[RMDB]
RNA sequence: GGGAACGACUCGAGUAGAGUCGAAAAGAGUUGGGGGAGACCGAAGCGAGGAGGAAAGUAAAGAAAGCAACGGGGCUAGCCGUCAGGUGUUCCUCCCCCCGAGAGGGGAAGAGUGAGGCUUAUCCCGGAACAGGUUAGUUCGCUAACCUGAAAAGAAACAACAACAACAAC
Reactivity to 2A3 in 0.01 (KOAc 150mM, MgCl2 10mM, bicine 150mM(pH8.5), 24C), signal-to-noise 9, nucleotides 027 to 129: g070a010g030u160u110g000g000g000g020g010a030g020a020c000c020g010a020a000g010c020g020a020g010g030a010g010g010a050a030a000g070u130a030a040a020g060a050a070a010g050c050a030a070c030g010g000g000g000c040u050a030g010c000c000g080u070c040a030g020g060u060g050u070u020c010c010u020c010c010c000c000c000c000g090a100g040a070g070g000g000g000a030a010g030a000g030u140g040a030g010g000c000u040u060a050u040c000c000c000g010g000a060a020
Reactivity to DMS in 0.01 (KOAc 150mM, MgCl2 10mM, bicine 150mM(pH8.5), 24C), signal-to-noise 9, nucleotides 027 to 129: g000a090g000u000u000g000g020g000g020g020a090g010a070c040c010g010a140a060g000c130g000a050g010g010a030g010g000a050a030a050g020u070a030a050a050g000a070a060a080g040c130a090a120c110g020g000g010g020c120u030a040g000c000c000g040u050c080a050g010g000u020g030u000u000c030c000u010c010c030c010c010c010c020g030a090g020a110g010g000g010g000a020a040g000a060g020u020g000a130g000g000c060u010u020a080u000c010c010c040g010g010a090a150